Chemical mapping of a 177-nucleotide RNA with DMS. The data come from the RNA Mapping Database (RMDB), library M2PK50. For DMS, 1,442 sequencing reads were counted. Reactivities are given for positions 27 through 126.
[RMDB]
RNA sequence: GGGAACGACUCGAGUAGAGUCGAAAAGGUCGUCUUUUCGAAGACGACCACUGUCGUUCCCAAAACUUUUCGAAACAUGUCGAAAGACAUGCUGAAACAGAAUUGGUGUGUGUUUCGACACACACAAUGAAUGCAUCUCUUUCGAGAGAUGCAUUCAAAAAGAAACAACAACAACAAC
Reactivity to DMS in 0.01 (KOAc 150mM, MgCl2 10mM, bicine 150mM(pH8.5), 24C), signal-to-noise 2, nucleotides 027 to 126: g010g000u000c000g000u010c000u020u000u000u010c160g020a020a010g000a020c000g040a010c000c000a000c080u010g020u000c000g010u000u000c000c000c010a060a070a030a070c120u000u000u000u010c030g010a160a080a110c000a010u000g010u000c000g000a120a140a200g000a000c000a010u000g020c020u000g030a090a050a040c190a070g000a100a090u000u010g000g020u000g000u000g000u000g000u000u010u000c130g010a080c000a010c000a000c000a010c020a090a020